This 207-nucleotide RNA was probed chemically with 2A3. 2A3 adducts were read by reverse transcription with SuperScript II with manganese. Values cover nucleotides 27 to 156. It was measured as part of the RMDB library M2RFPK. For 2A3, 805 sequencing reads were counted.
[RMDB]
RNA sequence: GGGAACGACUCGAGUAGAGUCGAAAAGACGCCUUUAGAAGAAGAGGCUAGGGGGUAUUCCGGUGUGGGAUACUUAGUAAUAUGCAACGCUAAUUGCAUAAGAUUGUCGGACGGAAUUUACAGUCUUUAGAGAUAAGCACGUUCGCGUGCUUAUCAAGUACAUGACUUGCUUCGGCAAGUCAUGUACAAAAGAAACAACAACAACAAC
Reactivity to 2A3 in 0.01 (KOAc 150mM, MgCl2 10mM, bicine 150mM(pH8.5), 24C), signal-to-noise 2, nucleotides 027 to 156: g050a010c060g040c000c000u050u040u120a210g010a260a000g030a050a000g010a000g000g000c030u090a070g000g040g010g010g050u010a050u050u000c040c040g130g050u200g030u120g060g000g010a020u010a100c010u000u000a060g000u040a050a000u020a030u070g000c000a030a020c050g030c200u050a100a010u110u030g010c010a020u020a020a070g060a110u000u190g020u090c000g010g010a020c020g010g050a010a000u080u070u140a170c050a010g000u000c000u040u020u080a110g020a000g010a050u000a000a000g000c000a040c000g000u000u030c110g000c020g080u000g020c000u000u000a000u000c000a000a000